[RMDB]
RNA sequence: GGGAACGACUCGAGUAGAGUCGAAAAUCCUUUGAUUCCCAGAGAGAAUCAGGAGAAAACUGGCUCUCCCUUAGCCAUCCGAGUGGACGUCUGUCCUCCUUCGGAUGCCCAGGUCGGACCGCGGGGACUAGACUCUGGUUCGCCAGAGUCAAAAGAAACAACAACAACAAC
Reactivity to DMS in 0.01 (KOAc 150mM, MgCl2 10mM, bicine 150mM(pH8.5), 24C), signal-to-noise 9, nucleotides 027 to 129: u030c030c020u030u030u080g020a110u000u000c000c000c070a080g000a090g000a060g020a020a010u020c050a000g000g010a110g050a080a030a070a080c050u010g000g010c040u000c000u020c000c010c020u000u020a080g040c150c010a040u000c000c000g020a060g030u030g000g000a000c000g030u080c170u120g000u020c030c000u000c080c110u000u000c030g000g000a020u020g010c080c060c060a070g010g010u020c040g010g010a080c010c070g040c100g010g010g000g020a070c070u040a100
Reactivity to 2A3 in 0.01 (KOAc 150mM, MgCl2 10mM, bicine 150mM(pH8.5), 24C), signal-to-noise 9, nucleotides 027 to 129: u020c010c000u060u040u140g060a060u020u010c010c020c070a040g030a000g000a000g010a090a050u070c010a010g040g030a100g090a050a100a030a040c040u040g020g000c000u000c000u010c020c010c000u070u070a020g030c030c010a010u000c000c000g010a000g020u040g000g010a010c020g170u150c220u300g020u010c010c020u030c020c060u090u050c010g000g000a000u010g000c000c010c000a030g010g040u040c020g020g010a030c020c000g020c050g030g010g000g000a010c020u040a040
Chemical mapping of a 170-nucleotide RNA with DMS and 2A3.
Source: RMDB library 15KLIB, as collected in RNAgym.
The reactions ran in a buffer of 150 mM KOAc, 10 mM MgCl2 and 150 mM bicine (pH 8.5), at 24 C.
As a SHAPE reagent, 2A3 marks flexible, mostly unpaired nucleotides at the ribose 2'-OH.
For 2A3 the reverse transcriptase was SuperScript II with manganese.